[RMDB]
RNA sequence: GGGAACGACUCGAGUAGAGUCGAAAAGGCGGAGAAUCAGGGUUCGACUCCGGAGAGCGGGCCUGCGAGACGGCCCGCACAUCCAAGGACGGCAGCAGGCGCGGAACUUGCCCAAUGCGCGGCGCGCGCUUACAAUACGCUUCGGCGUAUUGUAAGCAAAAGAAACAACAACAACAAC
Reactivity to DMS in 0.01 (KOAc 150mM, MgCl2 10mM, bicine 150mM(pH8.5), 24C), signal-to-noise 2, nucleotides 027 to 126: g010g030c040g020g000a110g020a080a090u000c090a070g000g020g050u010u010c090g010a060c030u000c050c050g000g000a070g000a060g030c010g030g020g020c000c000u000g010c210g000a100g000a120c170g000g040c000c000c000g030c050a020c060a090u010c020c010a180a160g010g010a080c100g030g010c050a070g010c020a070g000g020c010g020c040g010g010a060a040c070u000u000g030c010c020c040a140a090u000g000c030g010c050g000g010c060g000c090g010c120
Source information:
Chemical mapping of a 177-nucleotide RNA with DMS. Conditions: 150 mM KOAc, 10 mM MgCl2 and 150 mM bicine (pH 8.5), 24 C. Source: RMDB library RFMREP, as collected in RNAgym.